An RNA of 207 nucleotides, treated with 2A3 and DMS and read out base by base. For 2A3 the reverse transcriptase was SuperScript II with manganese.
[RMDB]
RNA sequence: GGGAACGACUCGAGUAGAGUCGAAAAGUGGAUCAUCCCCAGGCCGACCUUUAGGUGACUGCAGCUCUGGCUCACACCUUGACUGCAGCCUUGGGAGGAGACCCUGAGCCAUACCCAGAUUCUUGAUCCAUUGAAACUGAGAUUAUAGGCCGGGCGCAACGCAAAUAGGGUUCGCCCUAUUUGCGUUAAAAGAAACAACAACAACAAC
Reactivity to 2A3 in 0.01 (KOAc 150mM, MgCl2 10mM, bicine 150mM(pH8.5), 24C), signal-to-noise 3, nucleotides 027 to 156: g040u020g000g010a020u020c000a010u010c000c020c030c000a050g050g000c050c050g070a200c010c010u110u260u230a080g010g000u050g120a240c050u040g000c020a010g010c070u070c070u240g130g000c020u040c080a030c020a020c050c000u060u110g050a080c000u020g010c020a030g000c000c000u030u040g000g010g010a050g010g030a050g080a090c000c000c000u090g010a020g030c020c010a040u060a070c050c000c000a010g040a210u210u200c040u020u130g010a060u010c020c040a030u060u070g110a080a050a000c040u070g000a010g020a190u040u200a090u240a200g000g000c000c000g000g000g000c030g060c050
Reactivity to DMS in 0.01 (KOAc 150mM, MgCl2 10mM, bicine 150mM(pH8.5), 24C), signal-to-noise 2, nucleotides 027 to 156: g020u000g010g000a200u000c040a170u000c020c000c000c070a180g010g040c030c010g000a030c030c060u000u010u020a110g000g000u000g010a050c040u000g010c030a050g020c000u010c200u010g040g050c000u030c190a160c140a030c050c020u010u000g010a030c030u000g010c040a020g010c000c000u000u000g000g020g000a110g030g020a290g000a060c020c020c000u010g000a110g020c020c040a230u000a150c020c020c030a060g010a200u010u000c040u000u000g000a040u000c000c030a080u000u000g000a090a120a070c110u020g010a110g020a200u000u000a070u020a070g050g000c030c040g010g010g050c040g010c090